Structure probing data (DMS and 2A3) for a 207-nucleotide construct. The RNA was probed in 150 mM KOAc, 10 mM MgCl2 and 150 mM bicine (pH 8.5) at 24 C.
RNA sequence: GGGAACGACUCGAGUAGAGUCGAAAACUGGGUGGGCUGUGAUCCUAUGUGUAGGGCUGGCUAAGUCCUUGUUCCACUCCUUCUUGCAGUGGAUCUUGCCGCUUCUCUGAAGAUGAUUGAAAUGCCCACAGCACUUGCAGAGCAAGCAGAAAAGACAUCAUUAUCCUCGUUUCGACGAGGAUAAUGAAAAAGAAACAACAACAACAAC
Reactivity to DMS in 0.01 (KOAc 150mM, MgCl2 10mM, bicine 150mM(pH8.5), 24C), signal-to-noise 2, nucleotides 027 to 156: c040u010g000g000g000u000g010g020g030c020u020g030u000g010a140u010c030c030u000a110u010g000u010g040u010a030g010g000g010c010u000g030g010c110u010a060a080g010u010c010c030u000u000g010u000u000c000c010a030c030u000c040c060u010u000c150u000u000g010c050a070g030u010g000g020a030u000c030u000u000g000c040c020g030c020u000u010c010u000c020u000g000a050a030g010a060u010g010a130u000u020g030a040a080a090u000g010c010c020c010a070c060a090g000c010a020c020u000u000g010c010a100g000a080g010c050a010a040g010c000a120g000a100a050a060a070g000a090c080a150
Reactivity to 2A3 in 0.01 (KOAc 150mM, MgCl2 10mM, bicine 150mM(pH8.5), 24C), signal-to-noise 3, nucleotides 027 to 156: c010u030g000g020g030u010g000g000g020c030u000g050u060g300a040u010c000c010u060a110u140g130u010g130u130a050g030g020g000c060u070g050g000c060u090a050a020g040u060c030c020u020u070g040u050u000c000c000a000c020u060c010c040u170u240c040u110u170g000c070a020g010u020g000g000a010u010c050u050u100g030c020c020g020c030u170u070c040u010c010u020g080a130a110g020a190u140g020a030u040u060g050a030a060a090u130g000c000c000c010a000c020a000g000c010a020c020u030u090g010c030a050g000a030g180c010a010a000g000c030a000g100a060a100a040a020g030a010c050a050
Record summary: The DMS profile rests on 5,801 reads. Source: RMDB library OK3TST, as collected in RNAgym.